This 177-nucleotide RNA was probed chemically with DMS. For DMS the reverse transcriptase was MarathonRT.

[RMDB]
RNA sequence: GGGAACGACUCGAGUAGAGUCGAAAAGAUAUGGAUCGACGUGGAGUCACUCGGAAACGAGAAUGACUAUGAAGCGUUCGAUCCUAAGUCAAACUAAACGGGACGACUUCGGUCGUCCCGUUUAGAACAUCAAAGGCAUCUUCGGAUGCCUUUGAUGAAAAGAAACAACAACAACAAC
Reactivity to DMS in 0.01 (KOAc 150mM, MgCl2 10mM, bicine 150mM(pH8.5), 24C), signal-to-noise 2, nucleotides 027 to 126: g000a040u000a300u000g000g020a000u000c000g000a010c000g000u000g040g000a050g000u000c000a090c010u000c000g020g020a070a090a120c000g000a020g000a180a090u010g000a010c000u000a180u010g010a160a250g000c000g000u000u000c000g000a000u000c000c000u010a000a060g010u000c090a070a130a180c010u000a010a000a000c010g000g000g000a000c000g000a000c000u000u000c210g030g050u000c000g000u000c020c000c000g000u000u000u000a000g000a130a170
Source: RMDB library TTRDEL, as collected in RNAgym. The RNA was probed in 150 mM KOAc, 10 mM MgCl2 and 150 mM bicine (pH 8.5) at 24 C.